RNA sequence: GGGAACGACUCGAGUAGAGUCGAAAACAUCUCGUCGCGAUCGGCUCAAAGCGCGUCCAGCAGCCGCAAACUGGGGAUAUUGGCCUGAUCAAGGCUAUGACUGGAGAGACCGUCGCCGACCAGGUCGAGGCGCAGAUCGGGGCCAUUCGCUUCGGUCUCCUUUUUGCUGGUUCGCCAGCAAAAAGGAAAAAGAAACAACAACAACAAC
Reactivity to 2A3 in 0.01 (KOAc 150mM, MgCl2 10mM, bicine 150mM(pH8.5), 24C), signal-to-noise 1, nucleotides 027 to 156: c010a120u060c020u030c000g010u030c000g030c040g030a070u080c070g000g030c080u010c070a110a000a000g110c040g000c000g070u000c000c010a050g050c010a010g050c020c000g160c300a170a060a080c050u060g000g010g060g000a020u040a180u240u230g070g100c010c000u040g010a060u150c100a220a100g000g020c000u090a200u170g050a160c070u010g010g000a050g030a030g000a050c060c000g020u120c050g000c050c010g030a040c010c000a020g030g030u070c010g010a060g030g040c020g000c080a010g000a010u070c030g000g000g000g000c050c000a070u180u050c060g000c000u000u000c000g010g030u000c060
Background
Source: RMDB library OK3TST, as collected in RNAgym. An RNA of 207 nucleotides, treated with 2A3 and read out base by base. Reactivities are given for positions 27 through 156.